[RMDB]
RNA sequence: GGGAACGACUCGAGUAGAGUCGAAAAGGUGGUUACGCAUUGCUGCUUUUUUCCUUCUACGUUUGCUGAUUGGAACAGUUAGGUAGUAGCAGCUUGGAUCUUUUUUGAUCCUUUGCGUUUUCACCGAGGGUUGACGCUACUUCGGUAGCGUUGACCCAAAAGAAACAACAACAACAAC
Reactivity to DMS in 0.01 (KOAc 150mM, MgCl2 10mM, bicine 150mM(pH8.5), 24C), signal-to-noise 7, nucleotides 027 to 126: g000g020u000g010g000u010u010a010c010g010c010a040u030u020g010c010u010g010c000u000u010u030u030u020u010c010c010u000u010c050u010a060c110g010u010u000u000g010c040u010g020a200u030u050g010g010a050a050c020a030g010u020u010a020g000g010u000a010g000u010a020g010c000a000g010c010u030u010g000g000a010u000c000u000u010u020u030u060u010g000a000u000c000c000u010u010u000g010c000g010u000u000u010u000c010a010c010c010g000a130
Reactivity to 2A3 in 0.01 (KOAc 150mM, MgCl2 10mM, bicine 150mM(pH8.5), 24C), signal-to-noise 9, nucleotides 027 to 126: g010g000u000g000g020u010u010a000c000g010c010a030u060u220g000c000u010g020c020u100u060u020u010u070u110c020c000u040u050c020u040a070c060g090u050u080u110g220c070u100g100a300u220u300g090g040a090a040c010a030g040u150u090a030g020g030u020a020g010u020a000g010c000a000g000c000u030u070g000g000a000u000c020u020u170u150u100u150u260g000a000u000c000c000u010u040u010g000c000g000u000u000u000u010c000a000c000c000g000a080
This 177-nucleotide RNA was probed chemically with DMS and 2A3. For DMS the reverse transcriptase was MarathonRT. For DMS, 59,124 sequencing reads were counted.